[RMDB]
RNA sequence: GGGAACGACUCGAGUAGAGUCGAAAACUGGGUUGAGAUGUAGGACUAAAGACCAUCUCCAAUCUUGUUGACAACAUAUGGUCUGGUAUAUAACAAGGUGUAGAUUGAUUCACGACUUUACAACCCAGUGAUUGGCAUGUUUCGACAUGCCAAUCACAAAAGAAACAACAACAACAAC
Reactivity to DMS in 0.01 (KOAc 150mM, MgCl2 10mM, bicine 150mM(pH8.5), 24C), signal-to-noise 2, nucleotides 027 to 126: c000u000g010g000g050u000u000g010a280g010a060u000g000u000a060g000g010a220c240u030a030a150a090g000a050c110c030a020u020c020u000c080c030a050a040u010c030u000u000g000u000u000g010a110c150a050a070c070a110u000a140u020g000g010u010c070u010g020g020u020a060u000a100u040a030a010c030a010a010g000g020u000g000u010a030g000a010u000u000g040a080u000u000c100a110c150g000a130c080u000u000u020a130c000a030a030c000c000c010a000
Reactivity to 2A3 in 0.01 (KOAc 150mM, MgCl2 10mM, bicine 150mM(pH8.5), 24C), signal-to-noise 1, nucleotides 027 to 126: c000u010g020g050g020u000u000g040a180g010a180u130g030u170a050g000g090a040c050u050a050a070a160g000a020c010c010a020u030c000u000c010c030a000a140u000c010u000u050g000u000u040g000a010c000a060a040c020a150u220a110u300g080g110u080c080u120g070g060u150a190u030a040u040a150a000c010a020a010g000g020u030g000u040a000g010a000u030u070g020a010u030u000c110a070c130g050a000c000u030u000u090a030c000a000a030c020c000c010a000